[RMDB]
Structure probing data (2A3 and DMS) for a 207-nucleotide construct. Values cover nucleotides 27 to 156. Values are in units of 0.01, from 0 to 300, in steps of 10.
RNA sequence: GGGAACGACUCGAGUAGAGUCGAAAACUAGAAGGUAUUACCAAACAUCCGUUUUUUUUAAAAAAGCAUAAGGCAUAAAAUCAAUUCACUAAUGUCAUGCUAGAGUGAGGUAGUAAAAUGAGGCAACUCAGACCAGAUGGUGUAAUUCAUAAACAGGGUACCUCUUUAAGUUCGCUUAAAGAGGUACAAAAGAAACAACAACAACAAC
Reactivity to 2A3 in 0.01 (KOAc 150mM, MgCl2 10mM, bicine 150mM(pH8.5), 24C), signal-to-noise 2, nucleotides 027 to 156: c010u020a030g020a090a010g030g000u010a030u120u140a050c000c000a090a010a110c070a130u080c070c150g000u050u020u000u010u030u030u050u180a070a070a000a010a090a000g000c010a020u040a130a030g010g010c010a010u070a060a060a120a050u130c050a060a210u190u130c060a010c110u060a120a000u010g000u020c000a030u030g020c000u010a030g010a000g080u090g020a040g040g000u040a010g030u050a040a030a020a040u070g010a010g010g040c010a010a070c030u010c020a000g030a040c080c040a010g000a140u040g010g080u030g000u050a050a110u070u070c040a060u140a140a110a070c020a060g020g000
Reactivity to DMS in 0.01 (KOAc 150mM, MgCl2 10mM, bicine 150mM(pH8.5), 24C), signal-to-noise 2, nucleotides 027 to 156: c060u000a140g010a170a080g000g000u010a080u000u000a120c000c000a080a170a090c010a060u020c100c070g030u050u020u000u000u000u030u010u050a050a040a090a030a120a060g020c020a050u000a030a100g010g030c010a030u010a020a040a100a120u010c020a090a110u000u000c060a050c100u000a110a040u000g030u000c010a190u020g000c030u000a110g040a060g000u000g000a140g040g010u010a050g000u010a030a030a100a110u000g020a050g010g010c050a080a050c010u030c030a050g010a070c070c000a120g010a050u000g010g060u000g000u000a030a100u000u000c010a060u000a040a050a180c080a120g000g010